Structure probing data (DMS and 2A3) for a 177-nucleotide construct. Values cover nucleotides 27 to 126. The reactions ran in a buffer of 150 mM KOAc, 10 mM MgCl2 and 150 mM bicine (pH 8.5), at 24 C.
[RMDB]
RNA sequence: GGGAACGACUCGAGUAGAGUCGAAAAGGCGCGCGCAAGUUCGAUCAGAUCCUUCACCGACCGUGCGGGCAAAUCGCUGUUGACGACGAGCAGGAUCGGCACGGUGCCGAGCAUCGUCACCGGCGCGCAACUAGACAGAAUUCGUUCUGUCUAGUUGAAAAGAAACAACAACAACAAC
Reactivity to DMS in 0.01 (KOAc 150mM, MgCl2 10mM, bicine 150mM(pH8.5), 24C), signal-to-noise 9, nucleotides 027 to 126: g010g010c090g010c020g020c030g020c060a110a080g010u010u010c040g020a050u000c110a120g010a110u010c060c040u000u010c050a080c040c030g000a120c110c060g010u000g010c070g000g000g010c110a050a110a080u010c030g010c020u000g000u000u000g000a080c040g010a030c070g000a170g010c080a090g010g000a090u000c010g010g000c030a210c120g010g010u000g010c050c040g000a110g010c090a090u000c010g010u000c010a040c040c040g000g000c000g010c170g010
Reactivity to 2A3 in 0.01 (KOAc 150mM, MgCl2 10mM, bicine 150mM(pH8.5), 24C), signal-to-noise 9, nucleotides 027 to 126: g070g000c030g000c010g000c010g010c100a070a050g040u120u100c030g030a080u080c050a050g040a160u090c040c000u070u090c050a040c040c030g070a050c010c030g020u030g020c020g030g030g000c030a080a060a040u090c030g000c040u040g040u140u070g050a060c040g010a010c030g040a030g050c050a050g070g120a080u030c030g010g000c050a040c150g160g020u060g030c010c010g010a020g030c020a070u050c000g010u010c000a010c030c020g030g000c010g000c020g000
The 2A3 profile rests on 48,484 reads. 2A3 is a SHAPE reagent: it acylates the 2'-hydroxyl of flexible nucleotides of all four kinds.